The data come from the RNA Mapping Database (RMDB), library RNAMAK. Chemical mapping of a 207-nucleotide RNA with 2A3 and DMS. The RNA was probed in 150 mM KOAc, 10 mM MgCl2 and 150 mM bicine (pH 8.5) at 24 C.
RNA sequence: GGGAACGACUCGAGUAGAGUCGAAAAGUGCCUCUUCGGAGGCACAGCGAGCGUACUACAUCGCGGCCGAGGAUCUUUCGAACUACAGAUUUCCCAAAUAGGAAAUCUGCGAAAGGGAGGCUACGAUGUAUCGCCUGUAGGGAUGUUCGCAUCCCAACAUUACGAGCACUUUCGAGUGCUCGUAAUGAAAAGAAACAACAACAACAAC
Reactivity to 2A3 in 0.01 (KOAc 150mM, MgCl2 10mM, bicine 150mM(pH8.5), 24C), signal-to-noise 3, nucleotides 027 to 156: g010u010g010c020c000u010c000u060u060c210g150g000a010g020g020c000a000c000a000g010c030g030a080g020c010g010u110a130c040u000a000c030a010u020c010g010c030g010g000c000c010g030a210g010g000a000u000c000u000u000u000c020g040a130a090c110u160a080c280a020g000a010u000u000u050c020c050c010a200a300a170u180a050g000g000a000a000a000u000c000u000g000c000g000a000a010a000g000g000g000a000g010g000c010u000a010c000g000a000u020g010u010a030u150c000g050c010c020u060g110u140a100g000g010g030a000u000g040u040u090c140g000c070a020u010c000c000c000a000a030
Reactivity to DMS in 0.01 (KOAc 150mM, MgCl2 10mM, bicine 150mM(pH8.5), 24C), signal-to-noise 1, nucleotides 027 to 156: g040u020g000c040c000u000c000u000u010c300g020g000a020g080g030c000a000c000a000g050c060g020a030g020c020g020u000a050c100u000a010c000a010u000c000g000c000g040g040c010c010g010a120g030g000a040u000c010u000u000u000c020g020a090a300c000u000a080c000a000g000a030u000u000u000c000c000c030a040a180a300u000a110g010g000a030a000a000u000c000u000g000c000g020a000a090a020g000g010g010a080g010g000c000u000a010c000g000a030u000g000u000a030u000c010g040c000c030u010g020u000a070g010g000g020a140u020g000u010u010c090g010c000a050u020c000c000c000a010a130